Conditions: 150 mM KOAc, 10 mM MgCl2 and 150 mM bicine (pH 8.5), 24 C. Structure probing data (DMS and 2A3) for a 207-nucleotide construct. DMS adducts were read by reverse transcription with MarathonRT. 2A3 is a SHAPE reagent: it acylates the 2'-hydroxyl of flexible nucleotides of all four kinds. For 2A3, 18,180 sequencing reads were counted.

[RMDB]
RNA sequence: GGGAACGACUCGAGUAGAGUCGAAAAGUGUCUUGGCAGAUGUCUGAUGUCCGAGUAGGAGUGAUUAUGGUUACUGUGUGAAGACUUGACUCUCAAGGAGUUGCAGGAUCAUACGUGGGAAGUGGAGGGGUUCCCAUGUGACCUUCUAUGAAGAUCAGACACCUAAACGAUUCGUCGUUUAGGUGUCAAAAGAAACAACAACAACAAC
Reactivity to DMS in 0.01 (KOAc 150mM, MgCl2 10mM, bicine 150mM(pH8.5), 24C), signal-to-noise 2, nucleotides 027 to 156: g010u010g010u010c010u010u010g010g040c050a030g000a080u010g020u000c030u010g020a110u000g010u000c020c040g020a180g040u000a130g030g020a070g020u000g010a150u020u000a070u000g020g030u000u000a070c040u030g020u010g030u020g010a080a070g000a080c020u000u020g010a050c040u000c040u000c090a160a140g030g020a080g030u010u000g020c060a090g010g010a150u010c020a050u020a050c060g020u010g020g000g010a050a060g030u010g000g000a100g000g000g000g010u010u000c010c000c000a080u020g020u000g010a030c040c000u000u010c030u000a130u000g020a040a060g010a030u000c050a270
Reactivity to 2A3 in 0.01 (KOAc 150mM, MgCl2 10mM, bicine 150mM(pH8.5), 24C), signal-to-noise 9, nucleotides 027 to 156: g090u060g020u030c030u040u060g040g000c030a020g020a150u080g060u080c050u050g040a070u060g070u040c040c030g020a030g040u060a040g010g050a030g020u150g040a100u070u160a050u150g050g020u040u060a130c040u040g010u020g030u040g130a060a040g030a050c000u050u070g020a020c010u020c020u030c160a090a080g120g000a020g040u060u060g040c040a000g010g020a030u040c020a030u050a060c020g020u030g000g000g010a020a030g030u080g050g030a080g010g000g000g010u010u010c010c000c000a010u040g020u010g020a030c010c000u060u010c020u050a130u190g060a050a040g030a070u100c070a030